The record gives the reactivity of an RNA of 177 nucleotides to DMS and 2A3.
Conditions: 150 mM KOAc, 10 mM MgCl2 and 150 mM bicine (pH 8.5), 24 C.
2A3 adducts were read by reverse transcription with SuperScript II with manganese.
[RMDB]
RNA sequence: GGGAACGACUCGAGUAGAGUCGAAAACAGGAAUUCUUAGAGCUGGCCGUCCCAAGAUGGGGUGGAGAGAGCGGCAUGAAAGAGAGAGAGAGAGAGAGACACGCCUGAAUGGCAGCAGCAGGCCUUACUAGCAGAAGCUAUUCGUAGCUUCUGCUAGAAAAGAAACAACAACAACAAC
Reactivity to DMS in 0.01 (KOAc 150mM, MgCl2 10mM, bicine 150mM(pH8.5), 24C), signal-to-noise 4, nucleotides 027 to 126: c070a120g010g010a090a070u030u000c030u010u010a120g010a130g030c030u000g000g000c020c030g000u020c000c010c020a130a080g010a150u030g010g010g020g030u000g000g000a090g010a110g000a080g010c050g000g000c060a090u030g000a070a050a040g000a070g000a070g000a040g030a050g000a070g000a090g000a080g020a060g010a070c120a110c170g010c020c010u010g000a050a070u030g000g010c030a050g010c070a050g000c080a020g000g000c030c060u000u020a130
Reactivity to 2A3 in 0.01 (KOAc 150mM, MgCl2 10mM, bicine 150mM(pH8.5), 24C), signal-to-noise 5, nucleotides 027 to 126: c040a030g080g080a050a090u110u000c040u070u130a100g010a030g070c020u040g050g010c010c010g030u060c000c000c010a030a030g180a130u200g000g010g000g030u060g040g020a050g000a000g000a000g060c030g020g000c030a070u120g070a030a090a020g070a040g010a000g010a000g000a000g010a000g000a000g000a000g000a000g030a000c020a050c080g040c010c020u040g040a080a030u110g050g000c020a030g000c010a000g020c000a010g050g000c000c010u010u070a040
Source information: Reactivities are given for positions 27 through 126.